This 177-nucleotide RNA was probed chemically with 2A3 and DMS. For DMS the reverse transcriptase was MarathonRT. The reactions ran in a buffer of 150 mM KOAc, 10 mM MgCl2 and 150 mM bicine (pH 8.5), at 24 C. The 2A3 profile rests on 21,620 reads. For DMS, 7,574 sequencing reads were counted. Reactivities are given for positions 27 through 126. It was measured as part of the RMDB library TTRDES.
[RMDB]
RNA sequence: GGGAACGACUCGAGUAGAGUCGAAAAGAUAUGGAUGCCUUACAGCUCUUGGACCUCUUUCGGAAACGAAAGAGCUAGAGCGUAACAUGGCAUCCUAAGUCAAAAGGUGUCACUUCGGUGACACCAACACUACCAUUGUGUUCGCACAAUGGUAGUGAAAAGAAACAACAACAACAAC
Reactivity to 2A3 in 0.01 (KOAc 150mM, MgCl2 10mM, bicine 150mM(pH8.5), 24C), signal-to-noise 6, nucleotides 027 to 126: g030a030u090a050u190g000g000a000u010g000c010c010u040u020a050c070a150g010c010u010c040u090u210g130g140a290c040c000u010c000u030u010u010c000g020g020a090a080a060c010g010a010a000a010g000a010g010c000u000a000g010a000g000c010g010u010a030a060c110a280u200g000g000c000a000u000c000c000u010a030a010g050u020c050a010a020a060a250g000g010u000g000u000c000a020c030u060u180c300g150g000u000g000a000c000a010c000c000a000a000
Reactivity to DMS in 0.01 (KOAc 150mM, MgCl2 10mM, bicine 150mM(pH8.5), 24C), signal-to-noise 6, nucleotides 027 to 126: g010a050u010a300u000g000g010a010u010g000c000c010u000u000a010c060a190g020c010u000c000u000u000g020g010a160c300c000u000c000u000u000u000c000g010g000a110a120a260c010g010a010a000a010g000a000g000c020u000a010g010a010g000c010g010u000a030a100c300a180u010g000g000c010a010u000c000c000u000a030a130g010u000c030a120a090a150a110g020g020u000g020u000c000a010c000u000u010c210g030g000u000g000a010c000a010c000c010a040a090